[RMDB]
RNA sequence: GGGAACGACUCGAGUAGAGUCGAAAAGGGGUCGGUCGUUUGACGGAGCUGACAUGCUCGUACACUGAAGCCUCCACGGUGUACAGAGCAACAGCAGCUCCCGAGACCGACGGAGGCACCCAAAAGAGUAAGCCACGCUUCGGCGUGGCUUACUCAAGUAUAUUAGUCCGUUCGCGGACUAAUAUACAAAAGAAACAACAACAACAAC
Reactivity to 2A3 in 0.01 (KOAc 150mM, MgCl2 10mM, bicine 150mM(pH8.5), 24C), signal-to-noise 2, nucleotides 027 to 156: g080g000g000g020u020c010g000g000u000c010g000u080u260u180g010a000c010g010g000a000g010c000u020g060a150c050a130u240g000c000u010c000g010u120a000c000a000c000u030g020a160a010g050c000c000u000c000c000a010c000g000g000u020g000u010a060c090a120g010a000g020c000a020a120c020a110g020c000a010g000c000u010c000c000c000g010a020g000a000c010c020g000a000c010g000g000a000g000g030c010a030c010c000c010a040a120a010a000g010a010g000u030a000a000g030c030c000a000c020g060c020u130u230c300g030g010c020g010u010g000g000c000u010u000a000c000u000c000a000a000